Structure probing data (DMS and 2A3) for a 177-nucleotide construct. For DMS the reverse transcriptase was MarathonRT. The RNA was probed in 150 mM KOAc, 10 mM MgCl2 and 150 mM bicine (pH 8.5) at 24 C.
[RMDB]
RNA sequence: GGGAACGACUCGAGUAGAGUCGAAAAUGGUGCCCGGUACAACCAUGCCUUUUAAAUGUUCUUCUGUGCGUUUUAGUAGUUCUUUAAUCGUAGGCGUACCAGAAAGCACUUUUUUACCGCCUUCACGGUAAGGAGCAUCCUUCGGGAUGCUCCUUACAAAAGAAACAACAACAACAAC
Reactivity to DMS in 0.01 (KOAc 150mM, MgCl2 10mM, bicine 150mM(pH8.5), 24C), signal-to-noise 1, nucleotides 027 to 126: u000g060g000u000g050c050c020c110g000g050u000a030c030a140a070c100c050a080u090g010c000c000u070u000u000u000a000a140a130u040g010u000u000c000u000u000c060u000g010u020g000c250g000u000u020u000u060a050g000u000a010g020u010u000c050u000u000u010a100a010u010c070g000u000a100g000g010c080g000u000a040c010c030a070g010a120a070a010g010c020a000c010u000u000u000u000u000u000a070c060c120g020c110c020u050u080c090a050c270g000
Reactivity to 2A3 in 0.01 (KOAc 150mM, MgCl2 10mM, bicine 150mM(pH8.5), 24C), signal-to-noise 3, nucleotides 027 to 126: u070g000g020u070g020c040c000c010g020g010u090a040c060a120a060c060c010a050u160g010c030c000u070u160u090u140a080a180a060u210g030u020u000c020u040u000c000u040g130u080g130c030g110u010u130u030u010a050g000u050a000g000u120u020c040u020u290u160a090a100u070c090g110u070a020g000g040c010g020u000a010c040c020a020g120a050a050a000g020c000a040c000u090u010u020u000u020u130a070c010c020g060c040c050u150u080c140a110c090g030